[RMDB]
RNA sequence: GGGAACGACUCGAGUAGAGUCGAAAAUAUGGGCACUUUAUAUGCUGUAAUCAUAACGAUGUGUGUGCCUUGAUAUGCACGCAUAUUCACGCAUCAAACGUGCAUACACACACAGAGUGAAUGUGCGCCGUACAGAAAAGUUCGCUUUUCUGUACGGAAAAGAAACAACAACAACAAC
Reactivity to DMS in 0.01 (KOAc 150mM, MgCl2 10mM, bicine 150mM(pH8.5), 24C), signal-to-noise 6, nucleotides 027 to 126: u000a060u000g010g000g010c020a010c050u010u000u000a120u010a130u010g010c080u010g010u000a100a090u010c060a030u000a150a080c020g000a190u000g010u000g010u010g000u000g000c300c110u000u000g020a090u000a020u000g000c030a060c020g020c070a080u000a110u000u000c120a100c130g010c130a040u000c200a060a100a100c050g010u000g000c020a030u000a050c050a020c030a020c020a000c010a020g010a170g010u000g000a050a060u000g010u000g010c120g000
Reactivity to 2A3 in 0.01 (KOAc 150mM, MgCl2 10mM, bicine 150mM(pH8.5), 24C), signal-to-noise 7, nucleotides 027 to 126: u250a080u090g030g030g040c040a030c050u090u280u170a140u060a030u230g090c080u100g130u210a060a100u160c060a040u040a110a010c030g030a050u010g020u010g010u000g000u030g040c000c030u010u060g070a070u030a000u070g000c040a020c010g020c020a020u020a060u200u180c090a080c150g070c030a090u060c080a140a090a020c020g000u000g000c000a020u050a040c030a010c010a000c000a000c010a010g020a010g020u030g060a110a060u080g000u010g010c040g000

The record gives the reactivity of an RNA of 177 nucleotides to DMS and 2A3.
The DMS profile rests on 5,848 reads.
The RNA was probed in 150 mM KOAc, 10 mM MgCl2 and 150 mM bicine (pH 8.5) at 24 C.
Source: RMDB library OK2TRN, as collected in RNAgym.